[RMDB]
RNA sequence: GGGAACGACUCGAGUAGAGUCGAAAACAUGCCCCUGCACCGAUACCGGAAGUCAUCGUGAUCCGCGCGGCUAGUGAUGACCCGGCCGGGGUGGACGAGCUGGUGGCAGCGAUCGCGCCGGGGCUUGCUACCGUCACGGAUUCGUCCGUGACGGUAGAAAAGAAACAACAACAACAAC
Reactivity to 2A3 in 0.01 (KOAc 150mM, MgCl2 10mM, bicine 150mM(pH8.5), 24C), signal-to-noise 5, nucleotides 027 to 126: c010a020u120g000c000c010c000c010u070g050c050a090c030c050g050a060u130a150c040c020g030g100a200a090g010u000c000a000u000c010g010u060g040a170u030c020c020g070c020g030c060g110g000c030u060a070g030u060g210a150u090g030a080c040c010c000g000g010c000c000g010g000g020g020u070g020g000a030c020g020a010g040c050u070g040g060u070g120g060c020a010g030c010g040a030u030c010g000c010g000c060c020g000g010g010g000c000u010u080g030
Reactivity to DMS in 0.01 (KOAc 150mM, MgCl2 10mM, bicine 150mM(pH8.5), 24C), signal-to-noise 1, nucleotides 027 to 126: c100a100u020g010c000c070c010c020u000g000c010a090c220c050g000a060u010a130c030c030g000g010a170a150g050u000c000a010u000c070g050u010g000a170u000c090c090g000c110g050c150g020g010c100u000a210g000u030g000a060u020g000a060c080c000c040g000g000c120c080g000g000g000g060u000g070g000a190c000g000a140g010c020u030g000g040u000g030g070c000a030g010c050g020a090u070c010g030c130g000c020c000g060g010g020g020c030u000u000g020